RNA sequence: GGGAACGACUCGAGUAGAGUCGAAAAACUAAUCCAAAGCAAGCAUAGGAGAACAGGUUUUUAACUAUUUUUAGGCAGAUAAAAAAUAGUAUUUGACAGUCUAACACUAACUGAACAAUAAGUGUUAAAAACUCCCUCCUGUUCGCAGGAGGGAGAAUCGCUUAUAUGCGUUCGCGCAUAUAAGCGAAAAAGAAACAACAACAACAAC
Reactivity to 2A3 in 0.01 (KOAc 150mM, MgCl2 10mM, bicine 150mM(pH8.5), 24C), signal-to-noise 1, nucleotides 027 to 156: a000c080u100a120a050u010c020c040a040a020a020g010c010a030a030g010c000a060u060a050g030g060a070g020a040a060c100a110g030g030u010u000u040u000u050a020a030c020u010a010u000u030u000u000u020a020g060g000c040a020g050a190u150a060a070a000a000a000a000u010a010g010u010a120u060u070u070g020a000c000a000g000u000c000u000a000a000c000a000c010u010a030a000c000u000g100a030a010c020a000a030u000a020a000g010u000g010u000u020a000a100a050a000a050c000u000c000c000c000u000c000c000u030g020u030u090c240g000c070a010g010g000a000g010g000g000a000g010a000a000
An RNA of 207 nucleotides, treated with 2A3 and read out base by base. Source: RMDB library M2RFOK, as collected in RNAgym. Values cover nucleotides 27 to 156.